[RMDB]
RNA sequence: GGGAACGACUCGAGUAGAGUCGAAAACCGCCGACCCCCAUGGACCGCGCUGCGGCACCAUGCCCACGCGUCAUGAAACCAUGAGGUCCGACCAGGCGCAUUAACUUGUCCUCGUAGGCGUCCGUCCCCAUUCAUGGGAAUUCGUUCCCAUGAAUGGAAAAGAAACAACAACAACAAC
Reactivity to DMS in 0.01 (KOAc 150mM, MgCl2 10mM, bicine 150mM(pH8.5), 24C), signal-to-noise 7, nucleotides 027 to 126: c070c020g000c070c040g000a170c040c000c000c020c020a040u010g000g000a140c050c050g010c050g000c180u010g010c140g030g010c020a100c160c130a090u030g010c000c000c000a120c070g010c030g020u010c070a090u020g000a110a100a120c090c020a050u010g000a100g010g010u010c010c030g020a080c080c090a060g000g010c080g000c060a070u000u010a070a100c080u000u020g000u010c050c010u000c070g000u020a060g010g000c040g010u000c020c030g010u000c020c040
Reactivity to 2A3 in 0.01 (KOAc 150mM, MgCl2 10mM, bicine 150mM(pH8.5), 24C), signal-to-noise 9, nucleotides 027 to 126: c010c000g010c010c010g060a070c000c000c000c000c010a020u030g010g020a080c030c020g010c010g050c130u080g010c110g020g000c010a060c090c080a130u240g000c010c000c000a020c020g010c000g030u050c030a080u120g050a100a020a020c030c000a020u060g020a020g030g020u010c010c030g010a030c010c010a030g020g000c020g000c040a030u070u090a080a050c090u050u080g030u060c010c000u010c030g030u050a030g040g000c010g010u020c010c020g050u050c010c010
Conditions: 150 mM KOAc, 10 mM MgCl2 and 150 mM bicine (pH 8.5), 24 C.
This 177-nucleotide RNA was probed chemically with DMS and 2A3.
2A3 adducts were read by reverse transcription with SuperScript II with manganese.
DMS (dimethyl sulfate) methylates the pairing face of unpaired adenines and cytosines.
For DMS the reverse transcriptase was MarathonRT.